[RMDB]
RNA sequence: GGGAACGACUCGAGUAGAGUCGAAAAUCGCACUCCAUCUGGUUGACAUCUUAGAGGAGGGCGGGCUUGGCUAGGAAGAAAUAUUUUCUGCCCCAAUACUUAAAAAAGAUGUGUCAGACCAAAAUGAAGCGUUAGCAUCAUUCGUGAUGCUAACGCUAAAAGAAACAACAACAACAAC
Reactivity to DMS in 0.01 (KOAc 150mM, MgCl2 10mM, bicine 150mM(pH8.5), 24C), signal-to-noise 1, nucleotides 027 to 126: u010c070g000c010a050c020u000c020c010a120u000c150u000g030g000u000u000g000a040c030a060u000c020u000u000a110g000a190g000g000a050g000g010g040c110g010g010g010c130u000u000g000g000c110u010a100g020g000a020a040g010a050a130a100u000a090u000u010u010u000c010u000g000c070c120c010c010a060a090u010a070c100u000u040a000a060a040a090a030a020g010a000u000g010u000g000u000c080a060g000a040c040c050a030a030a090a080u000g010a100
Reactivity to 2A3 in 0.01 (KOAc 150mM, MgCl2 10mM, bicine 150mM(pH8.5), 24C), signal-to-noise 1, nucleotides 027 to 126: u060c010g030c030a030c050u010c000c020a180u040c080u060g090g000u060u080g080a020c010a020u020c000u000u200a040g010a060g130g040a030g000g010g000c010g000g000g010c060u090u110g000g040c060u140a070g080g020a020a050g040a020a260a080u180a210u040u000u050u010c010u020g000c000c000c000c060a030a030u090a140c060u180u200a000a050a020a070a050a140g010a020u020g000u020g060u040c010a010g000a120c050c010a080a010a050a070u120g010a110
An RNA of 177 nucleotides, treated with DMS and 2A3 and read out base by base. The DMS profile rests on 952 reads. For DMS the reverse transcriptase was MarathonRT. Conditions: 150 mM KOAc, 10 mM MgCl2 and 150 mM bicine (pH 8.5), 24 C.